The data come from the RNA Mapping Database (RMDB), library OK3TST.
This 207-nucleotide RNA was probed chemically with 2A3.
The reactions ran in a buffer of 150 mM KOAc, 10 mM MgCl2 and 150 mM bicine (pH 8.5), at 24 C.
[RMDB]
RNA sequence: GGGAACGACUCGAGUAGAGUCGAAAACGACAUUCACACACUCAUGGUUGGUUCACCCGGAACCGGGAAGAGCCAGAUACUUGAAGCAGUGAUGAGCCUCACACCGCGCGUGAGUCGCGUGAGUGGGAAGAACGUCUCCAAGACGGGGCUUACUGCCUCCCGGUGUAGUUUUCGAACUACACCGGGAAAAAGAAACAACAACAACAAC
Reactivity to 2A3 in 0.01 (KOAc 150mM, MgCl2 10mM, bicine 150mM(pH8.5), 24C), signal-to-noise 1, nucleotides 027 to 156: c030g040a020c020a090u120u150c000a010c000a010c040a000c050u010c000a040u060g030g070u030u000g000g040u000u080c040a030c100c010c030g100g100a160a210c200c080g010g040g000a210a220g000a040g030c000c040a070g090a070u290a160c040u020u020g080a050a040g040c030a000g010u060g060a110u150g020a060g030c030c000u020c000a010c000a000c020c020g000c000g000c000g000u140g190a120g200u260c000g000c000g020u000g010a140g010u060g000g000g000a010a000g040a070a010c010g000u010c010u000c120c060a010a140g000a010c000g000g000g000g070c000u040u070a040c030u050g000c000c000